[RMDB]
RNA sequence: GGGAACGACUCGAGUAGAGUCGAAAACCCAACCCGCGGGCCGGCUACUCUUCUUUUCCUUUCCUCGUCUUCAUCGGUCAGCCUUCUGAGUUCCUCUUCUUCCUCCUUGCUGAGGAUCUUUCCUCCCUCCGUACUGAGUUCGCUCAGUACAAAAGAAACAACAACAACAAC
Reactivity to DMS in 0.01 (KOAc 150mM, MgCl2 10mM, bicine 150mM(pH8.5), 24C), signal-to-noise 9, nucleotides 027 to 129: c000c000c000a100a110c030c020c020g040c070g000g010g020c030c020g020g010c040u030a040c090u020c030u010u010c020u030u010u020u040c020c030u020u010u010c020c010u020c050g030u000c050u030u030c050a060u030c020g000g010u030c070a090g040c020c010u000u020c040u010g000a110g010u020u010c010c000u010c040u010u000c030u030u020c020c000u030c020c010u020u020g000c080u000g020a070g020g000a060u020c050u010u020u010c000c000u010c020c020c000u010c030c080
Reactivity to 2A3 in 0.01 (KOAc 150mM, MgCl2 10mM, bicine 150mM(pH8.5), 24C), signal-to-noise 9, nucleotides 027 to 129: c000c000c000a020a040c010c010c010g030c020g020g020g010c010c010g020g010c020u070a070c030u040c000u110u050c010u050u060u030u070c010c000u040u060u060c010c010u050c020g090u030c060u090u050c030a090u060c020g020g030u040c030a020g030c010c000u110u070c050u080g080a070g050u040u030c000c000u010c000u070u020c000u070u030c010c000u010c000c000u060u080g020c070u040g040a020g010g010a040u020c020u020u040u010c000c000u000c000c000c000u010c010c020